Source: RMDB library M2PK50, as collected in RNAgym. This 177-nucleotide RNA was probed chemically with 2A3 and DMS. For 2A3, 1,625 sequencing reads were counted. The DMS profile rests on 1,416 reads. The reactions ran in a buffer of 150 mM KOAc, 10 mM MgCl2 and 150 mM bicine (pH 8.5), at 24 C.
RNA sequence: GGGAACGACUCGAGUAGAGUCGAAAAACCAUCCUAUUCGUAGGAUGGUGCACCAUUGCCGAUUGUAUAUAAUACCGCAGGCGGAAAACCGGUUCAAAUAAGGAACUUGUCAGUUCGCUGACAAGAACCCUCUGAAGAUGUUCGCAUCUUCAGAGGGAAAAGAAACAACAACAACAAC
Reactivity to 2A3 in 0.01 (KOAc 150mM, MgCl2 10mM, bicine 150mM(pH8.5), 24C), signal-to-noise 2, nucleotides 027 to 126: a010c000c000a020u000c000c000u020a010u000u060c200g050u050a010g000g000a000u010g000g010u000g000c030a030c060c020a090u030u180g060c030c010g050a040u070u050g100u040a070u010a030u030a200a270u070a050c030c040g010c080a050g010g010c000g000g020a080a130a000a050c040c020g110g030u090u110c080a120a100a080u180a160a140g130g000a040a090c000u000u010g000u000c000a010g000u030u080c140g010c090u000g020a010c000a000a000g000a000a010
Reactivity to DMS in 0.01 (KOAc 150mM, MgCl2 10mM, bicine 150mM(pH8.5), 24C), signal-to-noise 2, nucleotides 027 to 126: a020c010c000a010u010c000c010u000a030u000u000c150g030u010a000g010g010a020u000g000g000u000g000c150a170c020c010a130u000u010g020c030c020g000a130u020u010g020u000a020u000a090u000a130a090u010a080c010c060g020c110a170g000g020c010g030g010a050a030a100a070c070c010g000g000u000u000c100a010a080a070u000a050a120g020g010a120a160c000u010u000g000u010c000a000g030u000u010c220g010c000u000g000a010c010a000a000g000a090a190